Chemical mapping of a 207-nucleotide RNA with DMS and 2A3.
The RNA was probed in 150 mM KOAc, 10 mM MgCl2 and 150 mM bicine (pH 8.5) at 24 C.
Source: RMDB library OK3TST, as collected in RNAgym.
[RMDB]
RNA sequence: GGGAACGACUCGAGUAGAGUCGAAAAAACUAACUCAGAAGCAAUUGGUGAGAAUGGAGACUGGGGACUAUGUUAGUAUAACACAGAAUUCAUGUUGAUGGUUCAUAAUGUUUCCCAACACAUUGUUCUGCACUGAGCACAAAGUGUAAUAAUGCAGAAGUAAAUCUCGGUUCGCCGAGAUUUACUUAAAAGAAACAACAACAACAAC
Reactivity to DMS in 0.01 (KOAc 150mM, MgCl2 10mM, bicine 150mM(pH8.5), 24C), signal-to-noise 2, nucleotides 027 to 156: a010a090c070u000a040a120c070u010c040a070g000a100a110g000c040a120a130u000u000g020g030u000g010a080g030a060a090u020g000g000a150g020a080c030u000g000g010g010g020a130c010u000a010u000g010u000u000a130g000u000a080u000a070a050c040a040c040a120g000a070a160u000u000c070a120u000g000u000u010g000a160u000g000g000u000u000c100a150u010a030a080u010g010u000u000u000c030c000c000a090a280c120a000c040a040u000u020g030u010u000c020u010g090c010a030c040u020g010a140g010c110a050c110a060a070a090g010u000g030u020a030a060u000a020a040u000g000c030a090g010
Reactivity to 2A3 in 0.01 (KOAc 150mM, MgCl2 10mM, bicine 150mM(pH8.5), 24C), signal-to-noise 2, nucleotides 027 to 156: a010a000c040u030a010a010c020u030c070a090g010a110a020g010c020a020a070u080u100g080g000u070g070a030g050a060a070u120g030g010a040g000a140c050u030g000g000g000g000a030c020u020a030u130g040u020u040a030g050u090a050u050a150a010c070a000c000a040g070a050a050u150u100c060a050u110g030u070u030g060a080u050g000g040u030u020c020a020u090a110a040u110g010u010u020u020c000c000c000a030a020c080a000c000a020u010u040g020u010u040c020u030g000c000a020c060u060g040a030g030c050a010c030a080a190a050g010u000g040u040a020a120u060a100a090u070g000c020a070g000